[RMDB]
RNA sequence: GGGAACGACUCGAGUAGAGUCGAAAACUUUGAAGGAGAAGAUUGGCAUUGAUCGCCAGCUGGGAGACAAUGGGAAGUGGCUCUGCGGCGUGAGGACGCUGUUGAAGAAGGACCACUGUGUGGUCUAUGCCUACUGGCUUUUCGAAGCCAGUAGGCAAAAAGAAACAACAACAACAAC
Reactivity to 2A3 in 0.01 (KOAc 150mM, MgCl2 10mM, bicine 150mM(pH8.5), 24C), signal-to-noise 1, nucleotides 027 to 126: c040u130u040u180g110a060a050g070g050a060g050a110a040g130a270u120u070g000g000c040a050u080u200g100a050u190c090g000c040c010a010g000c070u050g060g000g020a060g020a010c100a060a140u060g040g000g040a060a070g050u020g090g080c000u000c010u020g040c050g040g000c030g010u080g020a030g000g080a020c030g000c000u000g060u030u050g040a080a120g030a030a070g060g010a000c000c050a020c040u130g080u040g010u010g140g000u000c020u060a040
Reactivity to DMS in 0.01 (KOAc 150mM, MgCl2 10mM, bicine 150mM(pH8.5), 24C), signal-to-noise 2, nucleotides 027 to 126: c090u000u000u000g000a060a080g000g020a150g000a080a060g000a110u010u000g010g000c070a100u000u020g020a070u010c120g020c030c030a050g030c050u000g000g000g000a080g020a040c110a100a090u020g000g000g010a070a080g020u010g000g000c080u010c060u000g000c030g000g030c020g020u020g010a140g000g000a090c040g010c030u020g020u010u000g010a070a100g010a110a120g010g000a010c020c010a030c030u000g010u000g040u010g030g000u000c000u000a090
Notes
The record gives the reactivity of an RNA of 177 nucleotides to 2A3 and DMS. The RNA was probed in 150 mM KOAc, 10 mM MgCl2 and 150 mM bicine (pH 8.5) at 24 C. Reactivities are rounded to 0.1 and cut off at 0 and 3. For DMS, 1,310 sequencing reads were counted.